[RMDB]
This 177-nucleotide RNA was probed chemically with DMS and 2A3.
RNA sequence: GGGAACGACUCGAGUAGAGUCGAAAAUAGCCUCUGCUGGGUUGGGUGGGGGAACAAAAUGCAAUUAAGGGGAGGAGAGAUGGGAGCAAACACUUUUUGGACACUUACUCUGAGCCAAGCACUAUGCGUAUUGUUAGAGGUUCGCCUCUAACAAUACAAAAGAAACAACAACAACAAC
Reactivity to DMS in 0.01 (KOAc 150mM, MgCl2 10mM, bicine 150mM(pH8.5), 24C), signal-to-noise 2, nucleotides 027 to 126: u000a060g020c040c080u000c060u000g000c050u010g050g020g050u010u010g010g010g010u020g050g020g000g000g000a120a080c160a030a080a130a100u000g030c070a040a070u010u020a130a130g000g000g000g000a130g000g000a090g020a100g020a170u000g000g010g000a060g040c100a040a020a140c190a070c060u000u000u000u000u010g010g010a080c120a140c080u020u020a080c080u000c060u000g000a100g030c040c010a040a020g040c160a140c140u010a070u000g000c300
Reactivity to 2A3 in 0.01 (KOAc 150mM, MgCl2 10mM, bicine 150mM(pH8.5), 24C), signal-to-noise 1, nucleotides 027 to 126: u010a010g030c000c020u090c070u180g000c000u020g020g170g000u270u170g120g010g020u300g030g020g000g020g000a010a010c030a000a090a000a030u160g040c010a000a040u130u110a180a100g010g000g060g030a090g090g000a110g040a000g010a100u160g030g020g000a030g000c010a010a040a000c050a090c120u130u180u010u030u010g040g000a020c020a020c090u000u050a040c020u020c000u040g030a000g000c000c000a020a020g010c050a050c060u150a150u200g050c020
For 2A3, 920 sequencing reads were counted.
In probing experiments dimethyl sulfate is read out at A N1 and C N3, which are open when not base-paired.